[RMDB]
RNA sequence: GGGAACGACUCGAGUAGAGUCGAAAAGGAUGCAACGCCGAAAGGCGACGCUAAUCUCCGAAACUCGGUCGUAGUUCGGAUUGCGGAUUGAAACUCAUCCGCAUGAAGCUGGAUUCGGUAGUAAUCGAUCCGUAAUCUAAUUCGUUAGAUUACGGAUAAAAGAAACAACAACAACAAC
Reactivity to DMS in 0.01 (KOAc 150mM, MgCl2 10mM, bicine 150mM(pH8.5), 24C), signal-to-noise 9, nucleotides 027 to 126: g010g010a110u020g010c030a080a300c010g010c000c000g000a110a100a160g010g010c000g010a030c300g000c010u010a110a130u010c040u000c030c030g000a090a120a050c020u000c010g000g000u000c020g010u020a030g010u010u020c010g000g000a110u000u000g010c000g000g000a020u010u030g000a100a150a120c300u010c070a030u000c000c000g010c000a010u000g000a290a120g000c040u000g000g000a070u010u020c030g020g020u020a070g010u010a060a070u010c060g000
Reactivity to 2A3 in 0.01 (KOAc 150mM, MgCl2 10mM, bicine 150mM(pH8.5), 24C), signal-to-noise 9, nucleotides 027 to 126: g070g010a020u100g010c020a060a040c020g000c000c000g050a050a020a010g030g000c020g020a000c020g000c000u050a060a080u040c050u020c020c010g040a090a070a040c030u020c030g040g010u020c040g060u060a030g050u090u150c020g010g010a020u000u020g000c000g010g010a010u040u140g100a200a100a040c080u070c090a010u000c000c000g000c000a000u020g010a010a010g010c030u050g020g020a060u130u090c020g060g020u060a030g030u030a070a120u070c060g010
Source: RMDB libraries RFM100 and RFMREP, as collected in RNAgym. This 177-nucleotide RNA was probed chemically with DMS and 2A3. DMS adducts were read by reverse transcription with MarathonRT. The RNA was probed in 150 mM KOAc, 10 mM MgCl2 and 150 mM bicine (pH 8.5) at 24 C.